RNA sequence: GGGAACGACUCGAGUAGAGUCGAAAAAGAAAGAGCGUAUUCGCCUCUUGACGUGAAUGAGCCUAGACUGUAGGCUCUAGUGGGAUAGUAACGCUCACUCCCAAAACGCUAUUCCACAGUCAGUUAAUAAUGAUGAGAUCUUCGGAUCUCAUCAUUAAAAAGAAACAACAACAACAAC
Reactivity to DMS in 0.01 (KOAc 150mM, MgCl2 10mM, bicine 150mM(pH8.5), 24C), signal-to-noise 3, nucleotides 027 to 126: a080g010a080a090a090g000a010g020c000g020u000a190u010u010c030g000c070c040u010c160u000u000g010a040c090g010u000g010a050a040u000g010a000g000c000c000u000a060g000a130c160u000g010u010a010g000g000c000u000c000u010a020g010u000g000g000g010a000u000a000g010u000a080a020c010g010c000u000c010a120c170u000c000c000c000a070a050a080a080c200g000c000u010a010u000u000c000c010a010c000a110g000u000c030a050g020u010u000a080a140
Reactivity to 2A3 in 0.01 (KOAc 150mM, MgCl2 10mM, bicine 150mM(pH8.5), 24C), signal-to-noise 2, nucleotides 027 to 126: a030g120a020a050a000g000a010g010c000g010u040a120u060u130c070g060c050c010u140c070u090u060g010a030c040g050u090g060a080a020u100g010a000g000c000c000u050a120g080a300c110u240g140u210a010g010g010c000u000c000u010a040g010u010g010g010g020a010u010a020g020u030a060a030c020g020c000u010c020a010c060u010c000c020c000a040a000a000a000c050g000c000u000a010u010u000c010c000a010c000a010g060u030c010a000g020u050u100a110a110

Chemical mapping of a 177-nucleotide RNA with DMS and 2A3. The DMS profile rests on 3,144 reads. Source: RMDB library M2PK90, as collected in RNAgym. For DMS the reverse transcriptase was MarathonRT.